[RMDB]
An RNA of 177 nucleotides, treated with 2A3 and DMS and read out base by base. The data come from the RNA Mapping Database (RMDB), library OK2TST. The DMS profile rests on 1,850 reads.

RNA sequence: GGGAACGACUCGAGUAGAGUCGAAAAGACGAUCUAACUUGCCAUCGCUGACCAUUUUUUCCAGUUCCAAUAGGGCAUGAGGAAUGGAUUGCGCUUGUUUGUAAGGGCGAUGUGCGGUCAGGGCAUAGUAUUACGGUCACUUCGGUGACCGUAAUACAAAAGAAACAACAACAACAAC
Reactivity to 2A3 in 0.01 (KOAc 150mM, MgCl2 10mM, bicine 150mM(pH8.5), 24C), signal-to-noise 3, nucleotides 027 to 126: g070a010c030g020a060u030c010u070a040a050c010u060u300g000c000c000a030u020c030g020c050u010g040a090c010c000a050u040u030u000u030u110u000c060c030a070g060u190u000c030c000a120a150u160a240g050g000g030c030a060u030g040a050g020g010a030a020u010g030g020a040u030u120g060c130g020c040u050u080g110u270u160u090g140u120a070a080g070g030g000c020g010a010u050g080u130g040c000g000g000u000c030a040g000g040g000c010a070u100a100
Reactivity to DMS in 0.01 (KOAc 150mM, MgCl2 10mM, bicine 150mM(pH8.5), 24C), signal-to-noise 2, nucleotides 027 to 126: g000a200c140g010a090u030c030u000a080a050c040u000u010g020c020c000a050u000c090g010c000u000g010a140c040c030a040u000u000u000u000u000u000c040c050a150g010u020u000c000c020a130a190u020a140g000g000g010c010a080u000g000a140g000g000a030a030u000g020g000a190u000u000g000c030g000c080u010u000g010u010u010u020g020u000a080a050g010g000g020c040g000a020u000g000u010g020c050g000g010u010c010a040g000g000g020c080a060u000a120